Structure probing data (2A3 and DMS) for a 177-nucleotide construct. For DMS, 2,436 sequencing reads were counted. The data come from the RNA Mapping Database (RMDB), library OK2TST.
[RMDB]
RNA sequence: GGGAACGACUCGAGUAGAGUCGAAAAGCUGAAGGCCUUGCCGACUGGAUUAUUAGGAAUGUGUGAGUAGUGCUGUGUCCAUUGCUGGGCCUCCCUACCUUGAGUUUGGGAGGUUUUCAGCAUGAAGCGUCCGUCAUUAUUUCGAUAAUGACGGACGAAAAGAAACAACAACAACAAC
Reactivity to 2A3 in 0.01 (KOAc 150mM, MgCl2 10mM, bicine 150mM(pH8.5), 24C), signal-to-noise 1, nucleotides 027 to 126: g000c010u020g060a070a000g050g060c000c000u040u060g040c030c020g070a040c020u070g010g050a030u050u040a080u130u160a150g000g080a220a060u100g070u000g000u040g100a030g050u080a060g010u090g010c020u010g000u070g010u090c030c010a070u070u060g000c000u000g000g000g000c030c010u020c000c000c000u000a000c000c000u170u300g150a170g250u110u300u070g020g000g010a020g040g010u100u000u030u000c000a000g000c020a000u040g000a010a010g100
Reactivity to DMS in 0.01 (KOAc 150mM, MgCl2 10mM, bicine 150mM(pH8.5), 24C), signal-to-noise 2, nucleotides 027 to 126: g000c040u010g020a100a110g010g000c060c030u000u000g010c020c040g010a100c010u030g000g000a080u000u000a110u000u000a070g020g010a060a070u010g040u000g020u000g000a080g020u000a080g000u000g010c030u010g020u000g020u000c020c030a080u020u000g020c010u000g000g000g010c000c010u000c000c010c000u000a010c020c040u020u010g000a110g010u000u010u000g020g010g010a020g000g010u000u000u010u000c000a000g030c000a020u010g000a090a130g010